Overview:
Chemical mapping of a 177-nucleotide RNA with DMS. Source: RMDB library OK2TST, as collected in RNAgym. Reactivities are given for positions 27 through 126.

[RMDB]
RNA sequence: GGGAACGACUCGAGUAGAGUCGAAAAGUUGCCUGGGAGGGUCGUCACUGGGCACGGGUGCUCUCCUACUCAAAAUCCAUUUCACGGGCCGGGACCUCGAAGGGUGUAUUAAACACCUUCAACCCCCAGGCAUUAAAUCUUUCGAGAUUUAAUGCCUAAAAGAAACAACAACAACAAC
Reactivity to DMS in 0.01 (KOAc 150mM, MgCl2 10mM, bicine 150mM(pH8.5), 24C), signal-to-noise 2, nucleotides 027 to 126: g020u000u010g020c000c040u010g000g000g010a120g010g020g000u010c110g020u000c060a050c090u020g020g040g010c050a050c050g010g010g080u000g000c050u010c030u000c030c020u010a070c100u010c090a070a070a110a050u000c080c050a120u010u000u000c060a090c060g020g020g000c020c020g030g000g000a080c030c090u020c190g020a080a070g010g000g030u020g000u020a170u010u030a080a110a070c000a020c000c000u020u000c050a070a300c040c000c000c030c130